Chemical mapping of a 177-nucleotide RNA with 2A3 and DMS.
DMS adducts were read by reverse transcription with MarathonRT.
The reactions ran in a buffer of 150 mM KOAc, 10 mM MgCl2 and 150 mM bicine (pH 8.5), at 24 C.

RNA sequence: GGGAACGACUCGAGUAGAGUCGAAAAGGGGAAUAUCCCAAGGAGCCGUUACAUCCACCGAAAAUGCUGGAAAAUCGAAAUAGAAGUCCCACCACAUGAUCUGUUCGAGAAGGGGCAUUCGGAGCUCUAGAUAUCGUUGAUUCGUCAACGAUAUCUAAAAAGAAACAACAACAACAAC
Reactivity to 2A3 in 0.01 (KOAc 150mM, MgCl2 10mM, bicine 150mM(pH8.5), 24C), signal-to-noise 2, nucleotides 027 to 126: g070g000g000g030a050a150u070a090u220c010c020c020a000a030g050g010a010g010c010c010g020u030u040a040c020a100u000c000c000a020c020c010g030a020a060a060a060u060g000c030u050g080g010a040a030a030a080u070c000g020a020a010a110u130a080g050a080a010g080u020c030c020c000a030c050c000a060c010a050u070g010a040u020c010u030g070u090u050c050g010a010g050a120a020g090g020g000g000c020a010u050u030c020g030g020a030g000c000u010c010
Reactivity to DMS in 0.01 (KOAc 150mM, MgCl2 10mM, bicine 150mM(pH8.5), 24C), signal-to-noise 5, nucleotides 027 to 126: g020g010g020g010a170a160u000a130u000c010c000c010a150a140g040g000a060g020c010c030g010u000u000a070c180a100u000c010c030a090c040c020g010a040a060a080a060u010g010c040u020g000g000a070a050a120a080u000c030g020a040a040a050u010a050g000a070a120g000u000c020c020c030a100c080c070a060c140a070u010g010a090u000c020u000g000u000u010c030g010a040g020a090a080g020g010g010g010c020a070u000u010c050g010g000a080g010c110u010c090